[RMDB]
RNA sequence: GGGAACGACUCGAGUAGAGUCGAAAAUGCGACAAGUGCUUUCCCAUCGCAACCUCGGUUCGGUGUGUGGCGCCUUUGAGGGGUUUAGUGCGUCCGGUACGAGCUCCGGUUCGUCCGGCCGUAACGCCUUUUCAACUCACGGCCUCUAGGAAUGAAGCUGUUGAAUAUUCUUCGGAAUAUUCAACAGAAAAGAAACAACAACAACAAC
Reactivity to DMS in 0.01 (KOAc 150mM, MgCl2 10mM, bicine 150mM(pH8.5), 24C), signal-to-noise 2, nucleotides 027 to 156: u000g010c020g010a130c090a100a040g020u000g000c030u000u000u000c010c010c020a300u000c050g010c050a120a060c020c030u010c100g030g000u000u000c080g000g010u000g010u000g050u000g000g030c040g020c050c060u000u000u000g010a040g020g000g000g000u000u000u030a050g000u000g000c030g020u000c010c010g030g030u020a020c010g020a040g010c000u010c140c210g040g010u000u000c020g000u000c000c010g000g040c000c000g020u010a020a030c090g000c010c000u050u020u010u000c020a060a050c060u000c030a040c040g000g000c010c000u000c030u010a160g020g020a070a090u000g000a110a200g010
Reactivity to 2A3 in 0.01 (KOAc 150mM, MgCl2 10mM, bicine 150mM(pH8.5), 24C), signal-to-noise 4, nucleotides 027 to 156: u130g020c030g060a070c120a160a040g080u070g130c030u050u070u000c000c020c010a040u050c020g030c020a030a070c010c020u040c080g070g030u130u090c020g030g000u040g020u020g020u030g060g020c030g040c090c060u070u030u070g010a020g000g020g000g000u020u020u100a010g010u000g010c000g010u000c010c000g000g030u180a010c000g000a010g000c000u000c060c150g110g000u010u000c000g010u010c000c000g000g010c000c000g000u000a060a040c000g000c000c000u060u040u090u050c020a020a030c020u000c020a050c030g050g020c010c010u050c050u080a090g030g070a090a100u190g030a120a010g040
Notes:
Chemical mapping of a 207-nucleotide RNA with DMS and 2A3. The 2A3 profile rests on 3,516 reads. Conditions: 150 mM KOAc, 10 mM MgCl2 and 150 mM bicine (pH 8.5), 24 C. The data come from the RNA Mapping Database (RMDB), library PDB130.